Structure probing data (2A3 and DMS) for a 177-nucleotide construct. 2A3 adducts were read by reverse transcription with SuperScript II with manganese. For DMS, 46,540 sequencing reads were counted. Conditions: 150 mM KOAc, 10 mM MgCl2 and 150 mM bicine (pH 8.5), 24 C.
[RMDB]
RNA sequence: GGGAACGACUCGAGUAGAGUCGAAAAAUGCUGCUAGGCUGCAGAUGCUUGGCUUUAACCUAGGGACAGAGCAAAGCUUCAUGAAUUACCACUAGUUUAGGUUAUCUUCUGUUUAGUGGACAGAACACGUUAGUGUUUGAUUCGUCAAACACUAACGAAAAGAAACAACAACAACAAC
Reactivity to 2A3 in 0.01 (KOAc 150mM, MgCl2 10mM, bicine 150mM(pH8.5), 24C), signal-to-noise 9, nucleotides 027 to 126: a000u070g010c020u010g000c010u030a020g100g000c030u040g000c050a020g020a100u060g020c030u030u040g000g000c000u070u050u040a050a040c010c020u040a050g070g030g030a030c030a050g040a020g030c010a120a090a040g010c000u080u060c050a130u110g170a150a090u170u080a100c000c010a040c060u040a050g070u050u060u080a040g040g000u070u070a070u080c050u090u000c000u010g040u030u040u010a040g010u030g040g020a030c010a010g040a030a030c080a010
Reactivity to DMS in 0.01 (KOAc 150mM, MgCl2 10mM, bicine 150mM(pH8.5), 24C), signal-to-noise 9, nucleotides 027 to 126: a090u000g010c040u000g010c020u000a060g010g010c060u000g010c070a070g000a060u000g010c040u000u000g010g010c020u000u000u000a080a160c040c020u000a080g010g010g010a100c170a070g010a040g010c030a060a060a070g010c030u000u000c070a090u010g010a090a080u010u000a110c030c010a060c060u000a050g010u000u000u000a050g010g010u010u010a080u000c120u000u000c020u000g000u000u000u000a050g010u000g000g010a130c050a030g000a060a080c300a140